RNA sequence: GGGAACGACUCGAGUAGAGUCGAAAAGAAGAGAAUAAGCGCGGAUAUGUCUGUCGGUAGAGCCGCAGGACCGACACCUGCGAGUAAAGGGAUCAAGACCCUGUUCGCGCAAAGAUUGAAGUAGAAGCCACGUACCAGUAUUCGUACUGGUACGUGGAAAAGAAACAACAACAACAAC
Reactivity to DMS in 0.01 (KOAc 150mM, MgCl2 10mM, bicine 150mM(pH8.5), 24C), signal-to-noise 2, nucleotides 027 to 126: g000a100a090g000a090g000a100a030u010a070a100g000c000g040c020g010g030a030u030a010u050g000u000c060u020g020u020c010g030g050u050a110g010a290g000c030c000g030c030a010g000g000a280c000c000g010a040c090a040c050c010u000g030c000g000a150g000u000a020a070a110g000g040g010a040u010c140a060a020g000a010c010c140c110u000g000u000u000c000g000c000g030c020a060a120a080g000a130u000u000g000a060a230g010u000a010g000a150a080g000
Reactivity to 2A3 in 0.01 (KOAc 150mM, MgCl2 10mM, bicine 150mM(pH8.5), 24C), signal-to-noise 4, nucleotides 027 to 126: g130a020a000g100a020g040a110a070u250a300a060g000c000g000c000g000g040a020u020a040u160g080u040c030u000g030u060c040g100g130u080a020g000a010g060c010c000g000c010a020g000g000a180c010c040g000a010c010a000c010c000u000g000c000g000a040g000u020a030a060a030g000g040g010a010u110c090a110a030g010a030c010c010c020u000g010u000u010c000g000c000g020c030a000a050a000g030a030u040u090g020a060a000g020u130a020g040a130a000g010